Structure probing data (2A3 and DMS) for a 177-nucleotide construct.
For DMS the reverse transcriptase was MarathonRT.
2A3 adducts were read by reverse transcription with SuperScript II with manganese.
RNA sequence: GGGAACGACUCGAGUAGAGUCGAAAAAUAAAAUAAACCCAGAGUCCUCAGCAGGCCCUGGCCCACCUAGGUGCUCACUGAAUGAACACACAAGAGAAUGAAUGUAAGGCCAGCUGGUGGGACAGUGCAGUGAUGAGUACUUCGGUACUCAUUAUUGAAAAGAAACAACAACAACAAC
Reactivity to 2A3 in 0.01 (KOAc 150mM, MgCl2 10mM, bicine 150mM(pH8.5), 24C), signal-to-noise 9, nucleotides 027 to 126: a000u070a000a040a010a030u180a050a070a040c010c000c000a020g030a020g070u030c010c010u080c030a050g010c020a020g030g040c020c020c000u010g010g000c000c000c000a030c000c020u030a030g000g040u110g090c010u020c020a040c040u050g070a050a110u110g070a140a020c040a000c020a000c050a160a050g050a030g090a210a100u160g040a090a020u120g050u090a080a030g020g010c010c000a040g040c080u030g010g040u050g010g000g000a010c010a000g050u050g040
Reactivity to DMS in 0.01 (KOAc 150mM, MgCl2 10mM, bicine 150mM(pH8.5), 24C), signal-to-noise 9, nucleotides 027 to 126: a080u050a060a060a070a110u030a060a090a140c010c000c010a130g010a130g010u010c020c010u010c050a050g010c070a090g010g010c020c050c020u000g000g000c010c030c010a030c030c020u000a140g000g010u010g010c020u010c030a030c060u010g010a180a120u010g000a140a090c070a060c100a110c210a100a080g000a090g010a180a050u010g000a130a070u030g010u010a090a090g000g000c010c010a070g010c090u000g000g020u010g000g000g010a020c010a040g010u020g010